[RMDB]
RNA sequence: GGGAACGACUCGAGUAGAGUCGAAAACCACCCAGCCCUCAGACGGGGGCGAGUUUCAGUGCGUCGCUGGAGAUGAGUGUGCCUACUUCACUGUCACCAUCACAGGUGGGGGGCCAGGUGGGCCUCGACGCAUACGUCACUUCGGUGACGUAUGCGUAAAAGAAACAACAACAACAAC
Reactivity to DMS in 0.01 (KOAc 150mM, MgCl2 10mM, bicine 150mM(pH8.5), 24C), signal-to-noise 2, nucleotides 027 to 126: c010c020a150c010c030c020a190g020c020c000c020u020c000a150g030a120c300g020g010g000g000g010c000g000a030g010u010u010u000c070a080g040u000g000c050g020u000c040g060c010u010g000g010a090g030a090u020g000a170g010u000g020u010g010c030c030u010a060c050u010u000c120a150c050u000g010u000c020a050c030c000a030u020c210a120c200a120g000g030u000g010g040g000g010g000g020c060c120a100g020g010u010g010g000g010c010c000u020c060g000